[RMDB]
RNA sequence: GGGAACGACUCGAGUAGAGUCGAAAAGAUAUGGAUCGUGUAGGACAUGAGCGUGUAUCGGAAACGAUACAGCUCAACAGCCUACCGAUCCUAAGUCAAAACAUCUGCGCGUUCGCGCGCAGAUGAACCCACGAGUAUUGUUCGCAAUACUCGUGGGAAAAGAAACAACAACAACAAC
Reactivity to DMS in 0.01 (KOAc 150mM, MgCl2 10mM, bicine 150mM(pH8.5), 24C), signal-to-noise 1, nucleotides 027 to 126: g030a030u000a060u000g000g000a000u000c000g000u030g010u000a000g010g020a040c230a110u020g020a000g000c010g000u000g020u010a000u010c000g020g000a040a020a020c000g030a010u000a000c020a100g000c030u020c000a080a030c210a220g000c000c000u010a000c000c010g000a020u000c000c000u000a000a060g010u000c000a150a120a170a220c000a000u000c000u000g030c000g040c010g050u000u000c300g000c010g010c000g010c000a000g000a010u000g000a020a130
Reactivity to 2A3 in 0.01 (KOAc 150mM, MgCl2 10mM, bicine 150mM(pH8.5), 24C), signal-to-noise 2, nucleotides 027 to 126: g000a000u000a000u070g000g040a000u020c040g040u100g000u300a000g030g040a060c220a300u300g000a020g000c300g250u110g010u050a000u000c000g000g000a020a010a000c010g010a000u030a000c030a000g020c000u000c000a020a010c030a020g000c000c000u000a010c000c000g020a000u030c000c000u020a010a010g000u000c010a020a020a100a200c000a020u000c000u010g000c030g000c000g060u090u160c300g000c000g000c040g000c140a010g000a000u000g000a020a010